An RNA of 177 nucleotides, treated with 2A3 and DMS and read out base by base. The reactions ran in a buffer of 150 mM KOAc, 10 mM MgCl2 and 150 mM bicine (pH 8.5), at 24 C. 2A3 adducts were read by reverse transcription with SuperScript II with manganese.

RNA sequence: GGGAACGACUCGAGUAGAGUCGAAAAAGGGCUGGAACUCGCCCUCAUGAAGAUGGAAUCCGUAGUAAUCGCAUUUCAAAACAGUGCGGUGAAUACGUCCCUGCUCCUUGCACACACCGCCCGUCAACGGAUCUAUACCAUUCGUGGUAUAGAUCCGAAAAGAAACAACAACAACAAC
Reactivity to 2A3 in 0.01 (KOAc 150mM, MgCl2 10mM, bicine 150mM(pH8.5), 24C), signal-to-noise 7, nucleotides 027 to 126: a010g040g010g000c020u050g080g030a080a040c020u040c080g020c000c040c000u000c010a070u110g090a030a050g040a070u130g020g040a080a050u020c060c010g000u020a000g010u030a030a010u010c000g000c010a000u010u090u090c170a110a120a070a060c070a040g000u000g010c000g000g010u020g000a020a040u040a010c020g070u070c000c010c000u010g010c000u020c010c010u020u070g000c040a020c000a010c000a010c040c030g020c010c000c010g060u050c040a100a040
Reactivity to DMS in 0.01 (KOAc 150mM, MgCl2 10mM, bicine 150mM(pH8.5), 24C), signal-to-noise 5, nucleotides 027 to 126: a050g000g010g010c020u030g010g010a100a090c140u010c090g010c010c000c010u000c060a050u020g000a100a090g020a080u030g020g030a120a070u020c120c030g010u000a030g000u010a140a010u000c000g010c030a030u000u010u030c100a090a060a090a130c290a020g020u000g010c030g000g010u010g010a140a230u020a040c030g000u010c020c010c000u000g000c030u000c020c020u000u010g000c050a090c060a060c070a070c010c050g000c000c010c020g020u020c150a100a160
Overview
It was measured as part of the RMDB libraries RFM100 and RFMREP.